[RMDB]
RNA sequence: GGGAACGACUCGAGUAGAGUCGAAAAGAUAUGGAGUGGUCAGUGGCAAGGUAGAUGUCACCUGUUCAGGAUCGGAAACGAUCCCAGGUGACAUCUACUGAUGACCCACUGAGCCACUCCUAAGUCACUACCCUAUCGUCUUCGGACGAUAGGGUAGAAAAGAAACAACAACAACAAC
Reactivity to DMS in 0.01 (KOAc 150mM, MgCl2 10mM, bicine 150mM(pH8.5), 24C), signal-to-noise 1, nucleotides 027 to 126: g000a030u000a300u000g000g000a030g030u020g000g000u000c000a000g000u010g000g010c020a040a010g000g010u000a010g010a010u000g000u030c020a000c010c000u000g000u000u010c230a260g030g030a000u000c040g000g000a190a140a300c010g000a000u000c000c000c000a000g010g020u000g000a000c000a000u000c000u000a000c010u000g010a000u010g000a090c300c000c010a000c020u010g000a060g060c010c010a000c000u000c010c010u000a020a010g000u000c040a260

Structure probing data (DMS) for a 177-nucleotide construct.
It was measured as part of the RMDB library TTRINS.
Reactivities are given for positions 27 through 126.
Values are in units of 0.01, from 0 to 300, in steps of 10.
Conditions: 150 mM KOAc, 10 mM MgCl2 and 150 mM bicine (pH 8.5), 24 C.
DMS adducts were read by reverse transcription with MarathonRT.